[RMDB]
RNA sequence: GGGAACGACUCGAGUAGAGUCGAAAAAACACUGCCGUUUGAAGUCUGUUUAGAAGAAACUUAAUCAAGCUAGCAUCAUGUUGGUUGUUUAUCACUUUUCAUGAUGCGAAACCUUUCGAUAAACUACACACGUAGAAAGAUGUGUAUCAGGACCUCUCCAAUCAUAAAUGUUCGCAUUUAUGAUUGGAAAAGAAACAACAACAACAAC
Reactivity to 2A3 in 0.01 (KOAc 150mM, MgCl2 10mM, bicine 150mM(pH8.5), 24C), signal-to-noise 8, nucleotides 027 to 156: a000a000c040a010c020u040g010c030c030g030u010u020u040g040a020a010g020u030c060u050g080u080u090u120a110g030a180a040g050a080a070a020c070u140u110a090a050u110c020a020a000g020c020u030a010g000c010a000u000c000a000u000g020u030u030g020g000u030u010g020u030u070u030a050u050c020a000c020u150u190u080u040c000a000u000g000a000u000g000c000g010a000a000a010c010c020u070u170u140c040g010a010u020a020a020a000c000u030a000c010a010c010a000c020g090u140a070g230a160a080a030g090a270u010g020u010g000u010a050u130c050a040g010g120a050c010c020u040c000u000
Reactivity to DMS in 0.01 (KOAc 150mM, MgCl2 10mM, bicine 150mM(pH8.5), 24C), signal-to-noise 2, nucleotides 027 to 156: a050a040c070a040c080u010g030c040c050g060u040u010u000g000a080a120g010u010c070u000g000u000u010u000a170g020a150a120g010a100a050a110c060u000u010a090a120u010c070a030a030g020c040u000a300g010c010a020u010c030a030u000g030u010u000g010g000u010u000g060u000u000u020a150u010c090a030c010u010u000u000u000c020a040u000g010a020u010g000c030g000a050a030a080c070c020u000u000u000c030g000a120u020a020a050a110c040u000a030c020a010c030a020c010g020u000a120g010a190a110a110g000a090u000g020u000g000u010a020u010c030a070g000g010a120c030c000u000c030u000